Structure probing data (2A3 and DMS) for a 177-nucleotide construct.
[RMDB]
RNA sequence: GGGAACGACUCGAGUAGAGUCGAAAAAGUGGGAGCCAUCUAUUUCCCAACUCUGCCUUUCCUCCCAGCUGAUGAUGGUGGGGGCGUGGCCACCAGCCAUGGGAUUAAGAAGGAAGACCCCCCACCCACCUUGCAAUAACUUCGGUUAUUGCAAGGUAAAAGAAACAACAACAACAAC
Reactivity to 2A3 in 0.01 (KOAc 150mM, MgCl2 10mM, bicine 150mM(pH8.5), 24C), signal-to-noise 2, nucleotides 027 to 126: a010g030u040g010g030g000a010g110c030c010a060u020c080u160a190u080u100u020c000c010c010a030a100c040u040c040u100g080c020c010u050u030u050c020c030u040c000c000c010a020g000c080u120g040a190u020g010a040u130g060g030u010g000g020g010g000g000c030g010u020g080g000c010c070a070c050c050a060g020c020c020a060u000g040g050g020a020u120u110a080a090g050a050a030g090g010a010a000g040a030c000c000c000c010c000c000a030c020c000c000
Reactivity to DMS in 0.01 (KOAc 150mM, MgCl2 10mM, bicine 150mM(pH8.5), 24C), signal-to-noise 3, nucleotides 027 to 126: a050g010u010g020g000g010a060g020c110c040a070u000c100u000a170u010u000u010c000c000c010a140a120c120u000c030u000g010c010c010u000u000u000c060c050u010c010c000c020a130g010c100u000g000a080u010g010a100u010g000g030u000g000g010g010g010g000c070g030u000g000g000c010c030a080c110c120a110g020c040c080a040u020g000g000g010a130u010u010a070a110g010a090a060g000g010a090a090g000a110c040c000c000c010c000c010a080c010c020c170
Source information
Reactivities are given for positions 27 through 126.